[RMDB]
RNA sequence: GGGAACGACUCGAGUAGAGUCGAAAAUAGUAAUACAAGAUAAUAGUGACAUAAAAGUAGUGCCAAGAAGAAAAGCAAAGAUCAUUAGGGAUUAUGGAAAACAGAUGGCAGGUGAUGAUUGUGUGGCAAACCAAGGCUCUUUCGAGAGCCUUGGUUUAAAAGAAACAACAACAACAAC
Reactivity to DMS in 0.01 (KOAc 150mM, MgCl2 10mM, bicine 150mM(pH8.5), 24C), signal-to-noise 1, nucleotides 027 to 126: u030a160g000u000a090a080u020a090c080a070a100g030a190u000a030a060u020a020g000u020g000a020c040a090u020a040a010a060a170g000u010a110g060u050g000c000c000a050a070g000a060a080g030a020a080a020a150g000c060a000a010a020g000a040u020c050a020u010u000a060g080g070g000a040u020u000a030u010g000g000a030a000a080a050c100a030g000a020u030g010g000c030a110g000g020u010g010a060u050g000a160u030u010g060u000g020u000g040g040c100